Chemical mapping of a 207-nucleotide RNA with 2A3.
The data come from the RNA Mapping Database (RMDB), library OK3TST.
Values cover nucleotides 27 to 156.
[RMDB]
RNA sequence: GGGAACGACUCGAGUAGAGUCGAAAAUCAUUGUAAUGAAUGCAUAAUGUAUCAUAAGUGUUUUCUGUUUUUUACUGCUGUAACACUAUGGAUCUUUUUAUUUCCAUUCAGUAAAUAAGUGAUUGUCAUUGUUCUAGGCACUGAGGAUAUGAUAAUAGCAUAGCAGGACUUUCGAGUCCUGCUAUGCAAAAGAAACAACAACAACAAC
Reactivity to 2A3 in 0.01 (KOAc 150mM, MgCl2 10mM, bicine 150mM(pH8.5), 24C), signal-to-noise 1, nucleotides 027 to 156: u030c020a020u110u050g080u170a010a140u020g020a010a000u040g000c010a000u010a040a010u050g150u120a040u080c000a030u050a300a070g020u050g000u020u100u050u070c040u010g140u030u120u010u030u100u280a130c140u070g060c000u050g050u070a000a000c000a010c020u030a060u030g260g000a010u000c020u140u090u000u040u130a030u000u000u140c040c000a000u070u010c000a000g040u300a190a040a000u180a300a040g000u010g090a060u050u050g000u000c000a020u030u010g050u060u000c000u040a020g000g050c040a020c090u050g000a010g020g000a000u000a020u050g070a000u000a180a000u030a020